This 207-nucleotide RNA was probed chemically with 2A3 and DMS. 2A3 adducts were read by reverse transcription with SuperScript II with manganese. The reactions ran in a buffer of 150 mM KOAc, 10 mM MgCl2 and 150 mM bicine (pH 8.5), at 24 C. For 2A3, 17,819 sequencing reads were counted. For DMS the reverse transcriptase was MarathonRT.
RNA sequence: GGGAACGACUCGAGUAGAGUCGAAAAGGGGUCUGCUUUCCAGAGGAGAGGGACAUGCUCUGAAGCCUCCACGGAGCAACAGCCCUCUCUACCCACCUGGAUGGCAGACGGAGGCACCCAAAACAUAUACACAAGACUUCGGUCUUGUGUAUAUGAACAUUAUUAUGUUGUUCGCAACAUAAUAAUGAAAAGAAACAACAACAACAAC
Reactivity to 2A3 in 0.01 (KOAc 150mM, MgCl2 10mM, bicine 150mM(pH8.5), 24C), signal-to-noise 5, nucleotides 027 to 156: g050g000g030g010u010c010u000g000c000u010u010u000c000c000a000g000a010g010g000a000g010a000g020g000g010a030c040a060u080g000c000u000c000u010g080a150a040g000c000c000u000c000c010a010c020g000g010a000g100c000a030a020c070a130g090c000c000c000u000c000u000c000u000a010c010c010c010a060c010c000u000g000g010a000u010g010g000c000a000g000a000c010g000g000a000g000g000c000a030c000c010c010a050a090a020a020c010a000u010a000u000a000c010a000c000a010a000g010a000c000u050u240c300g070g000u000c000u000u000g000u000g000u000a000u000a000u000g000a000a000
Reactivity to DMS in 0.01 (KOAc 150mM, MgCl2 10mM, bicine 150mM(pH8.5), 24C), signal-to-noise 3, nucleotides 027 to 156: g030g070g030g030u000c000u010g030c010u000u010u000c040c010a010g010a260g020g010a070g000a050g020g020g000a050c040a280u010g000c010u010c020u000g000a060a180g010c010c010u000c000c020a300c010g010g000a030g020c000a050a050c050a160g000c010c000c010u010c000u000c000u000a010c020c020c030a300c050c010u000g020g010a040u000g000g020c040a010g010a000c000g020g010a020g060g010c010a140c010c000c010a080a040a130a150c010a020u000a000u020a000c010a020c000a020a010g000a030c010u000u000c300g060g010u000c000u000u000g000u000g000u000a000u000a000u000g020a100a270